[RMDB]
RNA sequence: GGGAACGACUCGAGUAGAGUCGAAAAGACGAUUUUAUUGACGCACCAUGCUAUUGCUUUAACGCUGAGGGUGAUGCAUCCUGGUCUUCUACUAUGAUCUUCUCUCUUCACCCCGUCGAGUGUGACGAACGCCAAUUCUUCGGAAUUGGCAAAAGAAACAACAACAACAAC
Reactivity to DMS in 0.01 (KOAc 150mM, MgCl2 10mM, bicine 150mM(pH8.5), 24C), signal-to-noise 6, nucleotides 027 to 129: g010a120c050g020a050u010u000u010u010a040u080u000g000a020c110g000c070a060c050c050a000u000g000c080u040a070u050u050g020c070u020u000u050a080a110c170g000c070u000g050a100g020g040g000u000g030a070u030g000c050a090u040c010c060u030g000g000u000c040u040u030c000u050a090c120u040a040u040g030a090u030c030u000u000c050u000c000u020c010u000u030c050a130c030c020c020c050g020u000c060g000a020g050u000g020u000g000a120c000g050a110a110c050
Reactivity to 2A3 in 0.01 (KOAc 150mM, MgCl2 10mM, bicine 150mM(pH8.5), 24C), signal-to-noise 9, nucleotides 027 to 129: g060a040c060g020a050u040u050u070u110a150u090u180g030a000c030g000c030a010c000c010a030u080g020c020u120a120u180u130g020c040u100u120u180a140a030c090g000c040u050g040a070g020g060g000u010g010a040u020g000c000a040u040c000c030u020g020g000u010c000u080u010c020u060a100c010u040a070u190g010a050u030c000u040u010c020u000c010u000c000u040u040c020a060c010c010c010c000g040u020c020g030a080g080u100g050u110g040a040c030g020a080a010c050

Chemical mapping of a 170-nucleotide RNA with DMS and 2A3. 2A3 adducts were read by reverse transcription with SuperScript II with manganese. For DMS the reverse transcriptase was MarathonRT. The data come from the RNA Mapping Database (RMDB), library 15KLIB.